[RMDB]
This 177-nucleotide RNA was probed chemically with DMS and 2A3. For 2A3, 1,673 sequencing reads were counted.
RNA sequence: GGGAACGACUCGAGUAGAGUCGAAAAACGGAGAGCUCUUGGCAAGGUCCCGACAAAUGGCUAUACUCUCCAUAGCACAAGUCACAUUGAGUCGGAUUGCAAUGGCAAUGCCAGAUAUGGUGAUGAACACGUCACCACUAUUCGUAGUGGUGACGUGAAAAGAAACAACAACAACAAC
Reactivity to DMS in 0.01 (KOAc 150mM, MgCl2 10mM, bicine 150mM(pH8.5), 24C), signal-to-noise 2, nucleotides 027 to 126: a100c170g020g010a010g000a030g020c270u000c040u020u000g030g000c070a110a080g000g000u000c000c020c040g010a040c110a000a010a020u000g000g060c000u000a020u000a110c050u000c020u000c010c020a060u000a010g000c020a200c180a140a080g030u000c070a300c060a050u000u000g000a130g000u000c000g050g000a110u000u010g010c170a140a150u050g090g000c000a030a060u000g000c010c030a050g000a060u030a050u020g030g020u000g040a080u000g020a070a170
Reactivity to 2A3 in 0.01 (KOAc 150mM, MgCl2 10mM, bicine 150mM(pH8.5), 24C), signal-to-noise 2, nucleotides 027 to 126: a000c070g020g020a050g030a000g090c010u040c040u110u140g040g020c000a050a060g060g030u010c000c000c010g020a010c000a000a070a000u140g100g000c000u010a010u000a040c000u010c000u000c020c020a010u000a000g000c020a030c030a050a090g020u130c050a020c010a080u030u110g060a050g050u000c000g050g050a060u010u240g040c060a060a250u190g060g000c010a000a000u050g180c020c030a030g020a020u160a090u080g130g050u070g040a050u080g040a070a000

In probing experiments dimethyl sulfate is read out at A N1 and C N3, which are open when not base-paired. For 2A3 the reverse transcriptase was SuperScript II with manganese.